[RMDB]
Conditions: 150 mM KOAc, 10 mM MgCl2 and 150 mM bicine (pH 8.5), 24 C. Chemical mapping of a 177-nucleotide RNA with 2A3 and DMS. Source: RMDB library 15KREP, as collected in RNAgym. The DMS profile rests on 787 reads.
RNA sequence: GGGAACGACUCGAGUAGAGUCGAAAACUUUAAAGUUCUUGAUAAUGGUAUCAUUAGGGAUGUAAAUCCUGAUGAUAAGUGCUUUGCUAAUAAGCACCGGUCCUUCACACAAUGGUAUCAUGAGCAUCUUGACAUAGAACUUCGGUUCUAUGUCAAGAAAAGAAACAACAACAACAAC
Reactivity to 2A3 in 0.01 (KOAc 150mM, MgCl2 10mM, bicine 150mM(pH8.5), 24C), signal-to-noise 2, nucleotides 027 to 126: c030u110u050u200a080a160a080g040u060u020c020u080u080g020a060u030a180a050u030g020g010u010a000u020c000a000u000u040a080g000g040g000a000u020g070u220a040a110a050u000c000c020u030g010a050u010g000a000u030a080a040g010u010g010c000u040u040u050g010c020u070a160a090u080a240a000g000c000a000c000c020g090g020u050c010c060u040u070c040a020c010a000c030a050a050u030g010g010u030a000u020c000a000u020g000a010g040c020a070u010
Reactivity to DMS in 0.01 (KOAc 150mM, MgCl2 10mM, bicine 150mM(pH8.5), 24C), signal-to-noise 1, nucleotides 027 to 126: c030u000u040u010a070a060a110g020u000u020c030u000u000g010a110u000a140a020u000g000g040u010a010u000c000a000u000u000a140g010g000g000a030u000g000u010a070a150a010u000c020c000u010g040a040u000g000a010u000a090a040g010u000g000c010u000u000u000g030c230u040a030a050u000a010a010g000c000a000c010c090g040g000u000c030c070u000u000c060a190c270a110c110a020a010u000g000g000u010a030u000c000a010u000g010a090g020c180a110u000